[RMDB]
RNA sequence: GGGAACGACUCGAGUAGAGUCGAAAAUGAGUCGGCCCGAGUGAUGACCAUCGGCGACAUUUGGGUGCAGGCGAGCGUGCAGGUUGCUGCAGGCGAUCCGGUCUACCUUGUCGCUGCCACUGGCCUGUUUACCAAUGCGGCUACUGAUAAUGUGGCCUCAUCAUAGACCGUUCGCGGUCUAUGAUGAAAAAGAAACAACAACAACAAC
Reactivity to DMS in 0.01 (KOAc 150mM, MgCl2 10mM, bicine 150mM(pH8.5), 24C), signal-to-noise 1, nucleotides 027 to 156: u010g000a080g040u000c010g000g020c000c000c010g040a110g040u000g000a080u010g000a050c030c010a070u010c040g020g000c000g000a050c010a110u000u000u010g020g000g030u010g030c060a110g010g000c020g000a300g000c010g070u000g010c040a030g000g020u000u010g000c020u020g000c010a100g030g070c000g030a150u000c020c060g060g030u000c060u000a090c000c000u010u000g020u000c060g020c020u000g000c060c040a040c160u020g050g030c020c020u000g020u000u000u000a060c030c070a070a090u000g010c040g060g010c040u000a200c020u000g010a180u020a070a120u000g020u000g020g010c000c010
Reactivity to 2A3 in 0.01 (KOAc 150mM, MgCl2 10mM, bicine 150mM(pH8.5), 24C), signal-to-noise 1, nucleotides 027 to 156: u150g000a010g010u020c000g010g040c010c000c000g040a040g010u070g050a160u060g020a050c040c050a170u300c030g000g000c000g020a000c010a020u170u180u190g070g000g030u040g060c080a050g010g000c050g000a020g000c130g050u000g010c020a010g030g090u280u210g160c030u020g000c000a010g190g000c000g000a020u000c010c000g040g000u000c050u040a060c020c010u030u030g000u010c000g040c000u000g000c000c040a060c010u010g000g000c000c020u050g020u000u060u090a100c020c040a070a060u190g050c040g000g050c010u030a000c020u070g150a220u160a300a070u220g000u000g000g000c000c000

Source: RMDB library OK3TST, as collected in RNAgym. Chemical mapping of a 207-nucleotide RNA with DMS and 2A3. The reactions ran in a buffer of 150 mM KOAc, 10 mM MgCl2 and 150 mM bicine (pH 8.5), at 24 C.